[RMDB]
RNA sequence: GGGAACGACUCGAGUAGAGUCGAAAACCGCGCCCCCAAGACGGCGUCCUCGGUGUCGAGGAUGUGCGCGGUCGCGGCGAUCUUGGAUUCGGACAGCGCGCACAGUCUGUCUACUGGCGAGGUCGCGGCUAACACACCGUUUCGACGGUGUGUUAGCAAAAGAAACAACAACAACAAC
Reactivity to 2A3 in 0.01 (KOAc 150mM, MgCl2 10mM, bicine 150mM(pH8.5), 24C), signal-to-noise 2, nucleotides 027 to 126: c000c010g000c010g010c020c010c000c000c010a010a020g030a000c030g020g000c010g040u000c000c000u000c010g250g040u300g140u300c030g000a000g030g000a020u030g000u000g000c060g000c040g020g020u040c150g090c020g300g000c060g000a040u110c080u090u190g210g000a140u140u100c020g000g030a020c010a110g090c070g010c010g010c030a010c000a030g050u150c040u070g020u040c020u110a160c050u030g060g030c040g070a140g000g040u090c030g000c010g030
Reactivity to DMS in 0.01 (KOAc 150mM, MgCl2 10mM, bicine 150mM(pH8.5), 24C), signal-to-noise 1, nucleotides 027 to 126: c010c010g000c030g020c030c010c050c010c020a080a040g010a020c020g020g010c030g000u000c000c000u000c010g000g010u010g020u030c000g020a030g010g020a140u000g030u000g010c010g020c000g040g020u000c030g030c060g030g010c090g010a020u000c050u020u010g060g020a080u020u010c000g020g000a050c020a060g010c010g010c040g020c020a020c070a090g000u020c000u010g000u000c000u000a120c280u010g000g000c140g000a100g020g010u010c040g040c020g000